[RMDB]
RNA sequence: GGGAACGACUCGAGUAGAGUCGAAAAACGUGACUGUACGCAGUCACGAGAUCUAUGAUGAGACUUUCACGACGGUCUUCCGAUGUAAUACAUACCUGUGGAUAUCUUUACGUGAAGCUGAGAUCAACCCGCAACUGUUCUUCGGAACAGUUGCGGGAAAAGAAACAACAACAACAAC
Reactivity to 2A3 in 0.01 (KOAc 150mM, MgCl2 10mM, bicine 150mM(pH8.5), 24C), signal-to-noise 2, nucleotides 027 to 126: a020c010g000u020g000a010c000u000g040u060a010c300g000c100a000g000u030c000a000c000g040a030g010a070u090c030u030a200u140g110a080u130g090a170g000a040c010u040u100u140c120a000c000g120a020c040g000g010u000c000u050u000c000c000g040a030u040g030u160a110a090u100a160c040a020u120a050c000c080u080g060u120g010g010a010u010a000u090c000u000u010u140a110c000g000u000g000a010a110g000c000u000g030a030g000a080u000c030a060a000